The record gives the reactivity of an RNA of 207 nucleotides to 2A3.
RNA sequence: GGGAACGACUCGAGUAGAGUCGAAAAGCGUACUACACGAUGGACAAGCGAAGAACGUACUUGUCAGCAGUCCCAAAUAGGACUGCUUGGAUUUAGUACGGGAGCUUGUACAUCGUGUAUCGCAAAACCUAGGUGCACGUUCGCGUGCACCUAGGAAUCUAUUCGCACGGUUCGCCGUGCGAAUAGAAAAAGAAACAACAACAACAAC
Reactivity to 2A3 in 0.01 (KOAc 150mM, MgCl2 10mM, bicine 150mM(pH8.5), 24C), signal-to-noise 1, nucleotides 027 to 156: g020c010g040u050a020c020u000a000c030a000c030g000a000u000g020g000a000c000a000a000g000c030g010a230a000g020a170a000c030g000u020a010c010u020u000g020u000c000a000g000c000a010g000u040c000c000c000a140a190a000u300a040g010g000a000c000u000g000c000u010u040g040g000a020u220u100u300a000g000u010a000c000g010g000g000a000g110c000u020u050g010u070a000c070a000u090c050g000u000g000u000a000u000c000g000c030a000a100a090a090c000c000u000a000g000g000u030g000c000a000c040g030u020u090c300g020c030g130u000g000c000a000c000c000u000a000g000g000a000a000

The reactions ran in a buffer of 150 mM KOAc, 10 mM MgCl2 and 150 mM bicine (pH 8.5), at 24 C.